[RMDB]
RNA sequence: GGGAACGACUCGAGUAGAGUCGAAAAGUACUCAGGCAUCCUCGUCGACGAGGAUCCACUAUGAAGCGGUGGGGAGGCUGAAGAUGUACGUUGACGAUGAAGAGUCUGCAGCACUUCAACAGGGAUGGCGGGUAGCUACGUUCGCGUAGUUACCCGCAAAAGAAACAACAACAACAAC
Reactivity to 2A3 in 0.01 (KOAc 150mM, MgCl2 10mM, bicine 150mM(pH8.5), 24C), signal-to-noise 2, nucleotides 027 to 126: g000u000a000c000u000c050a000g020g000c000a040u000c000c000u000c010g000u040c030g080a110c000g000a010g030g000a000u010c000c000a040c000u050a040u170g100a020a000g050c030g000g060u030g010g000g000g000a010g000g000c040u000g030a010a000g010a080u080g000u010a060c010g000u000u020g000a010c050g040a060u050g050a040a040g000a000g010u000c000u000g030c010a000g010c030a010c010u000u040c050a040a010c000a030g010g000g010a060u020g070
Reactivity to DMS in 0.01 (KOAc 150mM, MgCl2 10mM, bicine 150mM(pH8.5), 24C), signal-to-noise 4, nucleotides 027 to 126: g000u020a080c050u000c060a070g010g040c090a060u000c000c010u000c000g030u010c120g030a100c000g020a090g040g000a060u020c040c020a070c160u010a060u000g000a220a120g000c090g000g000u010g010g000g010g000a090g010g040c050u000g000a090a060g000a100u010g010u030a090c040g000u010u010g000a020c030g000a090u010g010a120a030g010a220g000u010c010u000g000c120a080g040c020a020c030u000u000c070a040a060c060a030g000g000g010a070u020g000

Chemical mapping of a 177-nucleotide RNA with 2A3 and DMS. The reactions ran in a buffer of 150 mM KOAc, 10 mM MgCl2 and 150 mM bicine (pH 8.5), at 24 C. For DMS, 6,564 sequencing reads were counted. For DMS the reverse transcriptase was MarathonRT. 2A3 adducts were read by reverse transcription with SuperScript II with manganese. The data come from the RNA Mapping Database (RMDB), library OK1LIB.